[RMDB]
RNA sequence: GGGAACGACUCGAGUAGAGUCGAAAAUAAACAACAAAGCACCUCGAAGACCCGUUUACACGGGCAACUCGUCAGUCUCGAGUGAGGUGCAAGAACGAGACUGACAAGCACGGAAAGAACCGUGCAACGCUGUGAUCGUCUUCGGACGAUCACAGCGAAAAGAAACAACAACAACAAC
Reactivity to 2A3 in 0.01 (KOAc 150mM, MgCl2 10mM, bicine 150mM(pH8.5), 24C), signal-to-noise 1, nucleotides 027 to 126: u060a000a120a030c150a060a030c000a070a070a030g000c010a000c000c000u000c000g080a140a090g210a300c000c000c010g100u180u060u140a070c160a040c000g000g000g000c000a000a000c030u090c160g000u000c000a000g000u010c010u000c000g110a110g040u290g000a000g000g000u030g000c010a000a000g040a080a070c000g000a000g000a000c000u030g000a000c000a000a000g000c000a000c000g010g050a000a220a130g100a300a000c000c000g000u000g030c000a000a000
Source: RMDB library OK1LIB, as collected in RNAgym. Chemical mapping of a 177-nucleotide RNA with 2A3. For 2A3 the reverse transcriptase was SuperScript II with manganese. Reactivities are given for positions 27 through 126. For 2A3, 792 sequencing reads were counted.